[RMDB]
Structure probing data (DMS and 2A3) for a 207-nucleotide construct. For 2A3, 1,043 sequencing reads were counted.

RNA sequence: GGGAACGACUCGAGUAGAGUCGAAAACGGUGCUUGCCAGGUGAGUGGAAACCCUCUGGGGCCAUCAUCAGGGUCUUUAGCAGCCUGCAGGGCCUCAAAAGCAGUGUGGCCCAGAAAAAGGAGAGAGAGGAGAGAAGAGGGGAACAUCCCAGGAGAAUAAUAGUGGGAUGUUCGCAUCCCACUAUUAAAAAGAAACAACAACAACAAC
Reactivity to DMS in 0.01 (KOAc 150mM, MgCl2 10mM, bicine 150mM(pH8.5), 24C), signal-to-noise 2, nucleotides 027 to 156: c030g030g020u010g020c050u000u000g030c000c050a100g020g030u000g010a080g030u020g040g030a100a110a110c030c010c010u000c040u000g010g020g030g030c040c020a060u000c060a100u000c040a130g000g020g040u000c030u010u000u000a090g010c040a120g000c040c030u000g000c030a180g000g010g030c020c020u030c060a030a090a050a070g030c020a120g040u020g010u010g000g030c040c030c000a110g010a050a060a040a070a060g000g000a130g010a080g020a080g000a070g000g000a120g040a100g000a040a070g040a060g030g020g000g000a040a030c040a040u000c030c010c000a180g020g020a100g000a090a200
Reactivity to 2A3 in 0.01 (KOAc 150mM, MgCl2 10mM, bicine 150mM(pH8.5), 24C), signal-to-noise 2, nucleotides 027 to 156: c040g000g010u040g030c010u010u110g040c020c010a020g020g000u030g040a100g010u130g000g010a060a070a070c010c000c000u070c070u080g030g010g070g110c000c000a040u060c010a000u030c030a040g000g010g020u000c010u060u110u070a040g020c020a010g050c010c030u080g010c040a060g010g020g000c000c020u030c020a080a110a020a000g050c060a060g020u010g020u030g120g000c000c050c010a000g080a030a090a000a020a010g020g000a030g000a000g000a000g000a000g050g010a040g010a000g000a060a000g030a010g040g000g000g000a000a030c000a050u040c020c030c010a010g040g080a050g010a020a090